[RMDB]
RNA sequence: GGGAACGACUCGAGUAGAGUCGAAAAUCCGUAACCGUGUAGGCCAGCAUCAAAGAUGCGUACCAAGCUGCGUUUCAACCUGCGUGGGUUGAGGCGGCUUAGCGGAUUAAGGCGUUCUGCCCUAGUGGUCCAUUACCCCAUGCAAAGUCUGCAUGCACAUGAAGGAUUUCUUCGGAAAUCCUUCAUGAAAAGAAACAACAACAACAAC
Reactivity to 2A3 in 0.01 (KOAc 150mM, MgCl2 10mM, bicine 150mM(pH8.5), 24C), signal-to-noise 6, nucleotides 027 to 156: u000c000c010g020u030a020a050c050c020g030u070g110u210a050g020g080c090c070a040g000c030a020u030c090a210a150a110g030a020u030g030c010g060u060a050c020c030a050a020g000c030u030g010c010g070u050u100u020c020a030a020c000c000u160g150c190g240u300g050g000g000u000u000g000a010g010g000c030g000g000c010u000u020a010g000c000g010g000a000u030u060a040a020g030g000c050g080u120u030c040u070g020c000c000c000u060a060g020u070g160g010u030c040c010a010u040u150a130c000c000c010c010a000u010g010c000a080a160a150g100u080c090u030g000c010a000u010g020c050a020
Reactivity to DMS in 0.01 (KOAc 150mM, MgCl2 10mM, bicine 150mM(pH8.5), 24C), signal-to-noise 2, nucleotides 027 to 156: u000c000c020g030u000a100a110c040c040g010u020g030u000a070g000g020c020c010a300g000c020a060u010c020a080a100a220g010a060u020g000c050g020u000a060c030c010a070a090g000c000u010g040c000g000u010u010u010c010a060a020c050c020u010g020c300g030u000g040g020g030u000u010g000a080g020g030c000g000g000c020u000u000a060g030c020g040g000a130u000u000a060a150g020g040c020g020u010u020c060u000g010c010c000c020u000a080g010u010g050g000u000c020c060a150u000u000a120c050c000c060c010a080u000g000c020a090a140a220g000u010c030u000g020c020a060u000g010c010a170
Annotation
Chemical mapping of a 207-nucleotide RNA with 2A3 and DMS. For DMS the reverse transcriptase was MarathonRT. The 2A3 profile rests on 4,954 reads. The RNA was probed in 150 mM KOAc, 10 mM MgCl2 and 150 mM bicine (pH 8.5) at 24 C. 2A3 adducts were read by reverse transcription with SuperScript II with manganese. The data come from the RNA Mapping Database (RMDB), library VIROID.